[RMDB]
RNA sequence: GGGAACGACUCGAGUAGAGUCGAAAACUCUCUGUCUCCGCGGUUUUUCUUCUUCUCGGAACGGCUCAUCUCGACAAGAGGCGGCGGUCCUCAGUACUCUUACUCUUUUCUGUAAAGAGGAGACUGCUGGACUCGCCGCCCGAGUUCGAGACUGAGCGAUAUUACCGGAGUUCGCUCCGGUAAUAUCAAAAGAAACAACAACAACAAC
Reactivity to 2A3 in 0.01 (KOAc 150mM, MgCl2 10mM, bicine 150mM(pH8.5), 24C), signal-to-noise 2, nucleotides 027 to 156: c010u020c010u000c020u040g030u000c080u010c060c020g040c080g120g000u090u020u110u090u110c020u060u030c010u100u050c080u080c040g030g040a140a080c040g050g000c000u000c000a010u000c010u000c000g000a010c030a040a080g080a170g030g030c000g000g000c010g010g000u000c010c000u000c010a040g020u090a300c020u010c010u070u110a210c000u000c010u100u180u120u120c140u280g300u300a020a000a000g010a000g000g000a000g000a000c000u000g030c090u030g010g010a020c020u070c160g000c010c000g000c000c000c000g000a000g000u110u040c000g000a000g010a010c090u030g000a000g010c010
The record gives the reactivity of an RNA of 207 nucleotides to 2A3. The reactions ran in a buffer of 150 mM KOAc, 10 mM MgCl2 and 150 mM bicine (pH 8.5), at 24 C.